[RMDB]
RNA sequence: GGGAACGACUCGAGUAGAGUCGAAAAAUGACUAUUACCACAACAGAUGCAUCUGGCAUUCUGUGCCUUGUGGCGUCAAUCAGUGAAUGCCUUGAACUGAACUAUCCAAAUGAUGAAUGCCGACAAAAUGCGAUCAUGCUGUGGGCUUCAAUCCUGAGACGUCUUCUCAAUUCGUUGAGAAGACGUCAAAAGAAACAACAACAACAAC
Reactivity to 2A3 in 0.01 (KOAc 150mM, MgCl2 10mM, bicine 150mM(pH8.5), 24C), signal-to-noise 2, nucleotides 027 to 156: a000u110g010a010c070u110a100u280u200a040c020c020a000c000a010a010c000a030g000a010u010g050c020a020u030c070u140g020g020c000a000u000u000c020u060g170u070g030c020c020u180u170g180u260g050g060c020g000u000c040a040a120u070c000a040g190u030g170a200a110u180g050c040c040u120u070g170a050a050c000u000g000a000a100c000u140a180u150c020c030a260a030a100u110g010a050u120g000a000a000u010g000c000c020g050a120c120a120a230a020a000u020g000c000g080a060u050c050a050u040g020c000u000g000u000g000g020g050c000u020u070c040a070a000u020c000c020u100g030a080